[RMDB]
RNA sequence: GGGAACGACUCGAGUAGAGUCGAAAACGUUGUCAUCGACAACACCCUAUGCAUUCAUGCUCUGUAAGGAUGCGCCGAAAGGUGAGCAAGCCCGAGUUGCACAGACCUGAAAUGCAACACUUUAGAGAAAACCCGAAGCAGUUCGCUGCUUCGGGAACAUUCCACAUUGGUUCGCCAAUGUGGAAUGAAAAGAAACAACAACAACAAC
Reactivity to DMS in 0.01 (KOAc 150mM, MgCl2 10mM, bicine 150mM(pH8.5), 24C), signal-to-noise 2, nucleotides 027 to 156: c030g000u010u000g020u000c000a130u000c090g000a090c020a030a030c040a060c000c000c030u020a080u000g000c010a010u020u020c060a190u000g070c030u020c050u000g000u000a300a180g020g010a130u000g040c010g010c050c020g030a070a120a070g050g060u000g020a090g040c060a130a170g000c110c040c030g000a030g000u020u000g020c000a040c040a190g020a190c050c060u000g000a060a100a030u000g000c000a030a060c030a140c090u000u020u000a050g020a130g000a110a060a110a210c000c000c000g000a030a020g010c010a060g000u000u000c290g040c020u010g000c000u020u010c010g000g000g000a010a000
Reactivity to 2A3 in 0.01 (KOAc 150mM, MgCl2 10mM, bicine 150mM(pH8.5), 24C), signal-to-noise 4, nucleotides 027 to 156: c090g000u010u010g020u020c130a260u180c300g010a000c010a000a000c010a080c010c000c010u040a050u050g020c010a000u000u010c020a040u140g030c020u000c000u010g030u000a040a020g020g000a010u010g000c000g000c000c000g040a070a060a020g000g000u030g020a030g020c010a020a020g000c000c020c000g150a120g060u020u060g040c030a040c010a040g100a070c040c030u110g010a070a050a060u020g010c010a020a040c050a050c060u130u170u250a140g030a010g030a100a110a050a060c000c000c000g010a000a000g000c000a000g010u030u160c210g040c130u000g000c000u000u000c000g000g010g000a000a000